[RMDB]
RNA sequence: GGGAACGACUCGAGUAGAGUCGAAAAUAACUCCUCCCGCGACAGCCGCUAAGGUGGAAACGCUAUGCGGUACUGCCUGAUAGGGUGCUUGCGAGUGCCGCGGGAGGUCUCGUAGAAAAUAACCUAACUACUUCCUCUCAUUCGUGAGAGGAAGUAGAAAAGAAACAACAACAACAAC
Reactivity to 2A3 in 0.01 (KOAc 150mM, MgCl2 10mM, bicine 150mM(pH8.5), 24C), signal-to-noise 3, nucleotides 027 to 126: u070a050a020c020u000c010c010u000c010c000c010g000c000g030a030c010a080g080c000c000g010c050u070a110a070g030g020u030g040g000a050a300a000c010g000c050u070a030u220g020c000g000g030u040a060c020u030g030c000c000u070g040a140u130a120g040g090g020u080g050c070u070u100g070c070g050a040g040u020g010c000c000g020c000g000g000g000a010g000g000u010c010u010c010g040u100a050g180a080a110a040a120u130a050a030c010c030u040a060a120
Reactivity to DMS in 0.01 (KOAc 150mM, MgCl2 10mM, bicine 150mM(pH8.5), 24C), signal-to-noise 3, nucleotides 027 to 126: u010a110a130c110u010c000c000u000c000c010c000g010c000g040a030c030a050g000c010c000g020c030u010a080a070g010g020u000g020g000a100a080a230c010g000c000u010a300u000g000c000g010g000u000a140c040u000g010c000c010u000g000a130u000a120g020g000g010u000g030c080u000u000g000c060g000a060g020u000g010c010c010g040c000g000g000g020a010g010g000u000c010u000c080g010u010a130g010a090a080a050a060u000a120a100c070c010u000a090a260
Record summary: Chemical mapping of a 177-nucleotide RNA with 2A3 and DMS. 2A3 adducts were read by reverse transcription with SuperScript II with manganese. It was measured as part of the RMDB library M2PK90. The RNA was probed in 150 mM KOAc, 10 mM MgCl2 and 150 mM bicine (pH 8.5) at 24 C.